[RMDB]
RNA sequence: GGGAACGACUCGAGUAGAGUCGAAAAAAGAAUCUUCACUCCGGUUUAUCUUUAUGGUUUAUCCUGAAUGCCCAUUUAUAUCAACGGAAGCAGAGCUUCUCUGAGGACAAAGAUAUUUUACGCGCACAAGUAUUGAUAACCUGGAAUCAUGAAACUACCGGUAAAUAGUCUUCGGACUAUUUACCGGAAAAGAAACAACAACAACAAC
Reactivity to 2A3 in 0.01 (KOAc 150mM, MgCl2 10mM, bicine 150mM(pH8.5), 24C), signal-to-noise 1, nucleotides 027 to 156: a000a000g060a000a050u030c070u070u040c050a020c070u000c000c000g030g100u000u100u050a020u040c030u140u060u020a130u200g060g040u030u060u300a110u150c030c000u080g090a170a060u050g030c020c020c000a010u000u070u020a090u030a010u020c030a080a040c080g000g000a070a000g000c040a060g020a000g090c070u110u060c020u040c000u160g080a010g070g000a020c040a060a080a050g030a010u020a010u000u160u000u040a020c050g000c000g030c040a000c000a130a060g080u080a040u070u010g040a010u060a060a010c010c010u010g050g030a020a040u050c050a020u060g050a250a020a070c000u300a040